[RMDB]
RNA sequence: GGGAACGACUCGAGUAGAGUCGAAAAGAAAGAAAGAACAAGGUAUGCUUUAGAUAACUCGAAUAUCACAUCUUCAGUGUUCGAAAUCUGAUGAGAUAUUCACGUUGUCUAAAUCAUGUUUUGUAAACUGAAAUCUAUAAUUCGUUAUAGAUUUCAGAAAAGAAACAACAACAACAAC
Reactivity to DMS in 0.01 (KOAc 150mM, MgCl2 10mM, bicine 150mM(pH8.5), 24C), signal-to-noise 9, nucleotides 027 to 126: g010a100a100a090g000a110a100a090g010a140a030c010a020a010g000g010u000a000u000g000c110u000u000u000a010g000a010u010a000a010c000u010c260g010a010a010u000a000u000c010a110c100a300u020c040u010u010c050a040g010u010g010u010u030c300g000a080a090a090u020c060u010g000a020u000g010a060g000a010u000a010u000u000c000a080c130g000u000u000g010u000c000u000a000a000a000u000c000a010u010g010u000u000u000u010g010u000a050a070a150
Reactivity to 2A3 in 0.01 (KOAc 150mM, MgCl2 10mM, bicine 150mM(pH8.5), 24C), signal-to-noise 9, nucleotides 027 to 126: g130a020a080a010g110a030a090a020g100a030a010c000a010a000g010g000u020a000u000g000c010u010u000u000a000g000a000u010a010a000c010u020c110g000a010a000u000a000u000c030a030c030a190u020c030u080u030c020a040g030u040g140u290u250c130g080a090a070a090u050c020u020g000a000u010g010a020g000a060u000a000u000u000c010a020c070g000u000u000g000u000c000u000a000a000a000u000c000a000u000g010u000u010u000u000g010u030a070a050a000
Notes:
An RNA of 177 nucleotides, treated with DMS and 2A3 and read out base by base. The reactions ran in a buffer of 150 mM KOAc, 10 mM MgCl2 and 150 mM bicine (pH 8.5), at 24 C.